[RMDB]
RNA sequence: GGGAACGACUCGAGUAGAGUCGAAAAUGAGAGGCUCAUUGCUUGUGAAAAUCCAUUCAUGGUUAACCAAUUGGCUUAUAGCUCUAGUGCAAAUGGCAGCCUGGUUGGCACAACUUUGCAGGGCAAGAUAGGUAGAUCUUCGGAUCUACCAAAAGAAACAACAACAACAAC
Reactivity to 2A3 in 0.01 (KOAc 150mM, MgCl2 10mM, bicine 150mM(pH8.5), 24C), signal-to-noise 9, nucleotides 027 to 129: u200g010a050g000a010g070g000c020u020c040a060u050u090g040c060u110u090g030u030g100a060a030a010a060u030c020c010a050u050u100c030a060u110g060g000u090u100a060a040c030c010a070a070u070u070g040g000c030u100u110a090u120a200g020c010u010c020u070a040g040u060g090c020a030a070a150u090g030g000c010a000g020c000c020u040g050g000u020u020g010g010c030a030c020a100a020c020u020u010u000g000c000a000g000g000g000c000a000a000g010a010u020a030
Reactivity to DMS in 0.01 (KOAc 150mM, MgCl2 10mM, bicine 150mM(pH8.5), 24C), signal-to-noise 9, nucleotides 027 to 129: u060g030a070g010a030g020g030c030u010c060a030u030u040g030c120u030u050g040u000g040a060a060a140a110u040c020c040a060u020u040c080a100u030g000g000u010u010a080a100c040c030a000a110u040u040g040g000c040u010u010a050u030a110g000c000u030c080u010a060g030u040g030c080a040a070a090u030g030g040c040a030g000c030c020u000g020g010u000u030g000g040c220a060c180a030a020c030u010u010u010g020c010a010g000g000g010c010a000a000g000a000u020a030
The record gives the reactivity of an RNA of 170 nucleotides to 2A3 and DMS. For DMS, 55,414 sequencing reads were counted. The reactions ran in a buffer of 150 mM KOAc, 10 mM MgCl2 and 150 mM bicine (pH 8.5), at 24 C. For DMS the reverse transcriptase was MarathonRT.